[RMDB]
RNA sequence: GGGAACGACUCGAGUAGAGUCGAAAACUGAUCCCUGUCAGAGAAGACUGAGAGAUGGAGUUGAUGUAUGAGAGAUCACAUGUUCCUACACGAUAAAUCACAUGAAGUUCAUGACGUGGAUGACUAAUCAAUGUUCCAAGGGAUGGCACUUUGAAUACUAUCUUUACCCGUUCGCGGGUAAAGAUAGAAAAGAAACAACAACAACAAC
Reactivity to DMS in 0.01 (KOAc 150mM, MgCl2 10mM, bicine 150mM(pH8.5), 24C), signal-to-noise 3, nucleotides 027 to 156: c020u000g000a080u000c010c000c020u000g020u010c060a150g020a140g010a110a030g030a150c040u000g010a110g000a090g000a120u000g010g000a090g010u000u000g010a070u020g020u000a060u000g010a070g000a140g030a150u000c030a060c090a090u020g000u000u000c040c020u000a070c030a110c050g050a130u010a090a080a100u000c030a090c020a110u000g000a070a110g000u000u000c010a070u000g010a080c030g050u000g030g010a080u000g000a100c080u010a070a080u000c050a020a090u000g000u000u000c020c020a070a090g000g030g000a070u000g010g000c010a080c110u000u000u010g030a070a090u000a130
Reactivity to 2A3 in 0.01 (KOAc 150mM, MgCl2 10mM, bicine 150mM(pH8.5), 24C), signal-to-noise 5, nucleotides 027 to 156: c040u030g030a070u060c000c010c000u020g050u030c030a030g040a020g030a250a010g060a080c060u070g040a040g000a010g010a100u050g020g030a050g040u090u070g030a070u080g080u120a070u100g040a040g000a000g010a080u070c030a040c020a080u080g040u030u010c010c000u070a030c020a010c030g060a040u080a190a150a080u100c050a030c030a110u080g080a120a020g050u130u090c030a020u070g050a050c050g000u030g010g030a060u060g020a050c060u100a050a040u050c040a020a060u100g020u060u000c030c010a030a030g050g010g020a040u050g010g010c050a020c070u060u090u110g040a040a030u140a160